[RMDB]
RNA sequence: GGGAACGACUCGAGUAGAGUCGAAAACCUGAGAACAUCUUGAUCAGGUGAACAAUCUGGAAGAAGACAGAUUUCACAUUUACACUUCUGUGGGCAUUCAAGGUGCCUCAGCUUGGGGAUGCCAGGCAACCCCACCCAAAAGGCUUGCCAUCAGUGAGUAUAUAAUCCGAUUCGUCGGAUUAUAUACAAAAGAAACAACAACAACAAC
Reactivity to DMS in 0.01 (KOAc 150mM, MgCl2 10mM, bicine 150mM(pH8.5), 24C), signal-to-noise 3, nucleotides 027 to 156: c080c000u010g020a050g010a080a100c040a030u000c010u000u000g000a100u020c060a060g030g030u010g010a060a060c120a050a050u000c010u000g000g000a140a250g020a240a200g030a140c020a050g020a050u000u000u000c000a070c050a160u000u000u010a120c020a070c060u010u000c070u010g050u020g000g010g000c080a110u000u000c000a040a050g050g040u000g010c030c000u010c020a040g010c060u000u000g010g010g030g000a140u000g010c030c070a150g030g010c040a040a070c000c020c020c010a060c020c010c040a040a070a070a080g000g030c050u000u000g010c010c030a070u000c030a110g000u010g000a220
Reactivity to 2A3 in 0.01 (KOAc 150mM, MgCl2 10mM, bicine 150mM(pH8.5), 24C), signal-to-noise 5, nucleotides 027 to 156: c010c010u000g010a010g010a040a020c010a010u010c000u020u010g010a010u060c070a070g000g110u010g010a040a040c070a080a050u010c010u030g050g060a180a110g070a100a030g100a220c000a000g020a010u020u050u060c030a020c010a040u140u170u270a080c050a020c040u210u250c120u250g030u070g030g050g000c070a050u030u060c020a040a010g010g000u010g000c000c000u010c010a020g010c030u090u120g000g000g000g020a020u090g060c070c070a060g060g000c000a020a110c000c000c000c000a050c010c010c000a020a080a010a000g060g020c060u040u050g020c020c000a050u060c010a080g080u020g120a020